[RMDB]
RNA sequence: GGGAACGACUCGAGUAGAGUCGAAAAGGCGUCUUCGCUGCCUCGGCCGCCGUGCACUGACCGGUAGCCGCCGUAAUGGCGGCAUUGUUCCCAUAAAGGGAUGUGGGUGUGGGUGACGAAGUAGCAGCCACGUACGUAUAUUCGUAUACGUACGUGGAAAAGAAACAACAACAACAAC
Reactivity to 2A3 in 0.01 (KOAc 150mM, MgCl2 10mM, bicine 150mM(pH8.5), 24C), signal-to-noise 7, nucleotides 027 to 126: g090g030c060g100u020c050u130u070c080g000c020u010g010c000c000u010c010g040g010c090c000g000c010c010g120u060g020c020a030c070u120g110a100c030c040g020g020u040a050g000c010c010g000c000c000g040u130a110a150u230g000g000c000g000g000c000a000u000u060g000u040u030c000c000c000a020u190a060a130a030g030g010g010a040u070g050u110g120g020g010u030g010u050g040g010g010u020g010a020c010g010a030a000g000u030a010g000c010a010g030
Reactivity to DMS in 0.01 (KOAc 150mM, MgCl2 10mM, bicine 150mM(pH8.5), 24C), signal-to-noise 7, nucleotides 027 to 126: g010g010c080g010u000c050u000u000c120g020c010u000g000c020c010u000c040g020g010c080c010g020c020c020g030u000g020c020a040c050u000g000a190c040c090g010g000u000a140g020c000c000g020c000c000g020u010a130a080u010g020g020c000g010g000c000a030u000u000g010u000u000c000c000c000a150u020a070a150a220g000g010g000a060u000g010u000g010g000g010u000g010u000g010g010g030u000g000a080c030g000a030a040g030u000a070g030c030a190g010